[RMDB]
RNA sequence: GGGAACGACUCGAGUAGAGUCGAAAAGAAGAUGAAAUAAUGACAUUCUUAUGUAAACAAAGAUUGGCAGAAUUCAUCCUUGCCUUACAAGUAAUACUAAAAGACAUAGAGGGUAACUUGAAUCCAUAGAAAAGAAUGAAGAGCAUUGGAAAUACAACUAAAUUAGGAUCUUCGGAUCCUAAUUUAGAAAAGAAACAACAACAACAAC
Reactivity to 2A3 in 0.01 (KOAc 150mM, MgCl2 10mM, bicine 150mM(pH8.5), 24C), signal-to-noise 2, nucleotides 027 to 156: g030a030a000g010a010u010g030a020a010a050u240a030a050u050g020a000c000a020u030u010c000u010u070a140u130g110u150a080a160a110c110a060a080a010g010a020u000u020g000g000c020a000g020a140a120u020u010c000a010u020c040c010u040u050g070c000c030u060u060a040c030a060a010g020u030a070a030u040a130c050u060a130a100a020a000g050a010c030a040u110a030g080a010g020g050g020u020a080a000c010u000u030g010a000a020u000c010c010a010u050a040g080a050a070a020a030g050a040a030u130g030a030a050g010a000g010c050a010u040u110g050g020a050a080a070u220a060c030a080a020
Reactivity to DMS in 0.01 (KOAc 150mM, MgCl2 10mM, bicine 150mM(pH8.5), 24C), signal-to-noise 1, nucleotides 027 to 156: g030a060a100g000a040u010g010a050a080a040u000a080a300u030g000a000c020a010u000u010c020u010u020a100u000g010u020a130a150a140c110a170a050a000g020a000u000u000g030g000c000a020g000a090a300u000u000c000a000u000c040c010u010u030g000c040c010u000u000a090c070a100a160g000u000a070a160u000a230c060u000a030a020a030a110g010a100c030a060u000a110g000a140g000g020g040u000a020a090c050u000u030g000a060a090u000c000c020a090u000a110g000a070a100a120a090g020a120a170u010g000a030a050g010a100g000c100a030u000u000g060g000a030a040a170u020a110c030a110a180

This 207-nucleotide RNA was probed chemically with 2A3 and DMS. The RNA was probed in 150 mM KOAc, 10 mM MgCl2 and 150 mM bicine (pH 8.5) at 24 C. The 2A3 profile rests on 1,005 reads. DMS adducts were read by reverse transcription with MarathonRT. For DMS, 1,643 sequencing reads were counted. Reactivities are given for positions 27 through 156. High DMS reactivity at an A or C suggests that its Watson-Crick edge is free.